[RMDB]
RNA sequence: GGGAACGACUCGAGUAGAGUCGAAAAGUGAGCGAUGUUCGCAUCGCUCACCGCGCGUUGGUGGUGUAAUGGUCAGCAUAGUUGCCUUCCAAGCAGUUGAUCCGGGUUCGAUUCCCGGCCAACGCACCAGGGAGUGCGUGACUUUCGAGUCACGCACGACGAGACUCUCAUUCGUGAGAGUCUCGUCAAAAGAAACAACAACAACAAC
Reactivity to DMS in 0.01 (KOAc 150mM, MgCl2 10mM, bicine 150mM(pH8.5), 24C), signal-to-noise 4, nucleotides 027 to 156: g000u000g000a030g000c000g030a020u000g030u000u010c300g040c000a020u000c000g000c000u000c000a000c000c000g010c090g050c030g070u010u000g020g000u000g040g000u000g020u000a040a040u000g010g020u000c090a050g030c000a090u010a110g010u000u000g000c000c030u000u010c190c170a100a130g010c020a090g010u000u000g000a020u000c010c000g010g000g010u010u000c050g020a300u000u000c020c000c000g000g000c000c010a020a020c010g030c030a060c000c040a060g010g010g020a160g040u010g010c000g030u000g000a020c010u000u000u020c300g010a070g000u010c000a010c000g030c000a000c000
Reactivity to 2A3 in 0.01 (KOAc 150mM, MgCl2 10mM, bicine 150mM(pH8.5), 24C), signal-to-noise 3, nucleotides 027 to 156: g000u000g000a000g000c010g000a000u010g020u100u170c290g050c110a000u000c000g010c000u020c000a000c000c030g030c000g000c000g000u000u030g020g000u010g000g000u030g010u030a020a080u120g060g180u220c050a000g000c000a020u030a040g060u010u020g000c000c020u170u120c150c010a030a040g000c010a010g010u000u000g000a010u000c010c010g020g000g000u020u000c000g000a000u000u030c000c000c000g000g000c000c000a000a000c000g030c000a010c010c010a040g120g050g030a150g000u010g000c010g000u010g000a000c000u050u060u120c290g070a000g000u000c000a000c000g010c000a000c000